[RMDB]
Conditions: 150 mM KOAc, 10 mM MgCl2 and 150 mM bicine (pH 8.5), 24 C.
An RNA of 177 nucleotides, treated with 2A3 and DMS and read out base by base.
The data come from the RNA Mapping Database (RMDB), library M2PK90.
The DMS profile rests on 900 reads.
RNA sequence: GGGAACGACUCGAGUAGAGUCGAAAAUUAAAUAGCGUAAUCGACAUUGAGAAUGUACGCUAAGUGUGUGUUGUAUGGGCAACGACCAAUUGAACACACACACAGUUGGACCUAAUGUCGAAAAAAACCCUCACAUCAAGUUCGCUUGAUGUGAGGGAAAAGAAACAACAACAACAAC
Reactivity to 2A3 in 0.01 (KOAc 150mM, MgCl2 10mM, bicine 150mM(pH8.5), 24C), signal-to-noise 2, nucleotides 027 to 126: u180u110a060a000a120u080a080g020c040g030u080a030a080u040c000g000a010c010a010u010u080g020a040g030a190a110u150g000u030a000c020g000c000u000a080a090g000u000g000u000g000u010g030u010u100g090u070a090u060g070g030g000c110a300a220c140g190a160c020c010a040a070u080u080g100a080a000c010a000c000a000c000a020c000a000c010a020g140u270u220g060g040a010c000c000u020a010a010u010g000u000c000g000a080a000a000a000a010a040a020
Reactivity to DMS in 0.01 (KOAc 150mM, MgCl2 10mM, bicine 150mM(pH8.5), 24C), signal-to-noise 1, nucleotides 027 to 126: u000u000a000a080a160u000a050g020c000g050u020a050a080u000c010g010a020c030a020u000u000g010a050g000a070a100u020g030u000a000c000g010c000u000a030a090g020u000g020u010g010u000g030u000u000g030u020a030u000g000g030g010c030a170a140c300g010a100c010c010a010a040u040u020g000a030a080c010a020c000a010c000a020c000a040c070a060g000u000u000g010g010a160c020c000u000a020a010u000g000u000c000g020a000a000a050a160a050a080a150